Chemical mapping of a 177-nucleotide RNA with 2A3 and DMS.
The DMS profile rests on 3,466 reads.
Values cover nucleotides 27 to 126.
The 2A3 profile rests on 544 reads.
The reactions ran in a buffer of 150 mM KOAc, 10 mM MgCl2 and 150 mM bicine (pH 8.5), at 24 C.
For DMS the reverse transcriptase was MarathonRT.
RNA sequence: GGGAACGACUCGAGUAGAGUCGAAAAAGCAAUGUUGAAGAGGGGUUUGGUUCCCUAAAACCAAACACGCGUUUGCCAUUUUGCAGUACAGUAAACAACUGGUAACAGUGCAUGUUACACAGUGCACUCAAAAUCGCUCAUUCGUGAGCGAUUUUGAAAAAGAAACAACAACAACAAC
Reactivity to 2A3 in 0.01 (KOAc 150mM, MgCl2 10mM, bicine 150mM(pH8.5), 24C), signal-to-noise 1, nucleotides 027 to 126: a000g100c040a080a030u090g000u040u040g060a110a030g080a040g080g080g020g000u000u000u010g000g000u030u000c000c080c000u050a080a120a000a000c000c000a000a000a000c040a000c070g070c080g000u080u060u010g000c000c000a100u020u020u050u100g080c060a040g060u120a010c030a040g070u130a000a060a020c010a060a020c120u010g010g060u040a070a000c030a000g000u030g130c070a100u000g000u010u080a000c300a000c000a020g000u010g010c040a010c020
Reactivity to DMS in 0.01 (KOAc 150mM, MgCl2 10mM, bicine 150mM(pH8.5), 24C), signal-to-noise 3, nucleotides 027 to 126: a090g010c120a140a060u000g000u000u020g010a040a070g000a070g000g000g020g010u000u000u000g000g020u000u020c050c030c030u060a110a060a050a020c010c000a020a040a010c000a050c030g000c080g000u070u010u000g000c080c040a050u000u050u030u000g020c090a060g000u010a040c200a070g030u000a120a030a030c170a070a020c060u000g010g010u030a020a030c070a050g000u000g030c110a060u000g000u000u010a070c060a100c050a080g000u010g010c040a070c130